[RMDB]
RNA sequence: GGGAACGACUCGAGUAGAGUCGAAAAUACUUAGUACGCGCGUAGUUGCAGGCAUUCCGGGUGCAGCAACUGACGCGGAAGACUUUUCCCAGAGUGUGCGCUUCAACUGGCGUGCUGAGUAGCGCACGAAUUGCACGUACGUUCGCGUACGUGCAAAGUUUGGUGCGUCAUUCGUGACGCACCAAACAAAAGAAACAACAACAACAAC
Reactivity to 2A3 in 0.01 (KOAc 150mM, MgCl2 10mM, bicine 150mM(pH8.5), 24C), signal-to-noise 1, nucleotides 027 to 156: u120a010c000u000u000a000g000u000a000c000g030c020g020c000g030u020a020g020u000u000g000c070a120g030g010c000a090u060u100c070c220g160g060g010u000g000c020a010g020c000a040a000c020u080g100a020c000g000c030g000g010a000a000g070a080c060u230u230u030u000c000c000c000a000g000a030g000u080g000u000g010c010g000c030u100u040c040a260a270c100u010g010g010c030g020u070g000c000u000g000a000g000u020a040g000c000g020c000a000c000g000a010a060u030u020g000c000a000c000g000u000a000c000g000u010u050c120g000c000g100u000a000c000g000u000g000c000a000a000a000
An RNA of 207 nucleotides, treated with 2A3 and read out base by base. The reactions ran in a buffer of 150 mM KOAc, 10 mM MgCl2 and 150 mM bicine (pH 8.5), at 24 C. Source: RMDB library M2RFOK, as collected in RNAgym.